The data come from the RNA Mapping Database (RMDB), libraries RFM100 and RFMREP. The record gives the reactivity of an RNA of 177 nucleotides to DMS and 2A3. In probing experiments dimethyl sulfate is read out at A N1 and C N3, which are open when not base-paired. Reactivities are given for positions 27 through 126. The reactions ran in a buffer of 150 mM KOAc, 10 mM MgCl2 and 150 mM bicine (pH 8.5), at 24 C.
RNA sequence: GGGAACGACUCGAGUAGAGUCGAAAAUACCUGGAUUUUUGCCCGAGAUGAUUCCUACCACCUUACUACUGACGAAGACACCCAUUCCAGUGGACCACUGUGACCCAGGAGGCAUUCAGCCAUCAUGGACUGUAUUAGGAUUCGUCCUAAUACAGUCAAAAGAAACAACAACAACAAC
Reactivity to DMS in 0.01 (KOAc 150mM, MgCl2 10mM, bicine 150mM(pH8.5), 24C), signal-to-noise 9, nucleotides 027 to 126: u010a090c050c040u010g010g010a070u000u000u000u010u010g010c020c010c020g010a090g010a080u010g000a130u000u000c020c010u010a120c070c040a060c060c030u010u010a070c050u000a060c060u000g010a090c080g010a100a060g010a100c100a070c030c020c030a100u010u010c030c040a060g020u000g000g010a090c090c030a040c040u000g010u010g000a070c070c020c010a070g000g010a080g000g000c030a100u010u010c120a110g010c010c010a060u010c080a100u020g010
Reactivity to 2A3 in 0.01 (KOAc 150mM, MgCl2 10mM, bicine 150mM(pH8.5), 24C), signal-to-noise 9, nucleotides 027 to 126: u140a040c010c010u040g090g050a110u050u060u020u050u150g040c010c000c000g050a050g010a080u120g020a050u060u050c010c010u030a060c000c020a030c000c010u050u080a060c020u030a020c020u040g050a030c040g040a060a020g050a020c020a050c020c010c010a030u060u040c020c000a020g050u060g030g040a030c010c020a020c040u040g040u070g080a060c000c010c010a030g040g060a030g030g010c010a020u110u110c040a050g010c010c010a060u090c030a040u150g100